[RMDB]
RNA sequence: GGGAACGACUCGAGUAGAGUCGAAAAGAGUAGUAGUUCGCUACUACUCAAAGGCACAAAAGGCACAGUUCUAUAGUGCAUGGAACACGCCAAGUGCCCGUGAAAGUAAAUCCUUCGGGAUUUACAAUAUUCAUCAGUACUUCGGUACUGAUGAAUAAAAAGAAACAACAACAACAAC
Reactivity to 2A3 in 0.01 (KOAc 150mM, MgCl2 10mM, bicine 150mM(pH8.5), 24C), signal-to-noise 4, nucleotides 027 to 126: g010a000g000u000a000g000u000a000g010u010u060c190g010c110u000a000c000u000a000c000u000c000a000a010a010g000g000c020a010c010a030a170a030a110g010g000c010a020c050a100g000u020u000c030u020a050u050a080g300u260g160c060a010u040g000g000a020a000c020a010c060g000c010c000a050a020g000u000g000c000c000c010g090u100g150a130a020a000g000u000a000a000a000u000c010c000u020u060c250g090g000g000a000u010u000u010a000c000a000a000
Reactivity to DMS in 0.01 (KOAc 150mM, MgCl2 10mM, bicine 150mM(pH8.5), 24C), signal-to-noise 6, nucleotides 027 to 126: g010a000g010u000a000g010u000a000g000u000u010c220g040c010u010a000c000u000a000c000u000c000a020a090a040g000g010c010a010c000a060a050a180a170g010g010c000a120c180a160g000u000u000c000u000a030u000a120g010u010g010c200a040u000g000g010a020a010c020a230c180g000c000c000a060a300g010u000g010c000c000c070g010u020g000a060a090a160g000u000a010a010a000u000c000c000u000u010c220g020g000g000a010u000u000u000a000c000a110a090
An RNA of 177 nucleotides, treated with 2A3 and DMS and read out base by base. The RNA was probed in 150 mM KOAc, 10 mM MgCl2 and 150 mM bicine (pH 8.5) at 24 C. For 2A3, 7,252 sequencing reads were counted. For DMS the reverse transcriptase was MarathonRT. 2A3 adducts were read by reverse transcription with SuperScript II with manganese. The DMS profile rests on 6,596 reads.